[RMDB]
RNA sequence: GGGAACGACUCGAGUAGAGUCGAAAAUGCUUUGGUAGCUUGCUACAAGGGGGUUAGCUGCUCGAUUGGCAGUAAUCGGGUUGGAAUAAUCAAACAACUACCUAAAGGCUGCUCAUACAUAACUAACCAACGGUAUUGACUUCGGUCAAUACCGUUGAAAAGAAACAACAACAACAAC
Reactivity to 2A3 in 0.01 (KOAc 150mM, MgCl2 10mM, bicine 150mM(pH8.5), 24C), signal-to-noise 1, nucleotides 027 to 126: u080g000c000u050u000u060g020g010u030a000g000c030u010u030g030c050u120a140c110a200a170g070g030g050g080g000u020u030a030g010c000u010g040c000u000c000g000a040u000u040g100g130c020a000g000u050a010a040u020c000g020g010g000u000u110g000g060a150a140u120a130a000u040c010a030a060a080c010a020a040c020u020a050c000c030u040a120a160a000g090g000c010u030g020c020u010c030a040u080a120c050a010u120a110a050c030u050a100a050c040
Reactivity to DMS in 0.01 (KOAc 150mM, MgCl2 10mM, bicine 150mM(pH8.5), 24C), signal-to-noise 2, nucleotides 027 to 126: u010g000c030u000u000u000g010g010u000a040g030c170u000u000g040c040u000a140c170a110a120g000g010g000g010g010u000u000a060g010c020u000g000c020u000c030g010a050u000u000g000g010c150a120g020u000a040a050u000c050g020g000g000u000u010g020g000a060a140u000a020a020u000c060a110a050a080c070a030a020c000u000a020c000c020u000a040a070a090g000g010c000u000g030c050u000c080a100u010a070c210a040u000a040a110c100u000a130a160c140

Source: RMDB library OK2TRN, as collected in RNAgym. Structure probing data (2A3 and DMS) for a 177-nucleotide construct. For DMS, 1,504 sequencing reads were counted. DMS (dimethyl sulfate) methylates the pairing face of unpaired adenines and cytosines. The 2A3 profile rests on 1,019 reads. Conditions: 150 mM KOAc, 10 mM MgCl2 and 150 mM bicine (pH 8.5), 24 C. 2A3 adducts were read by reverse transcription with SuperScript II with manganese.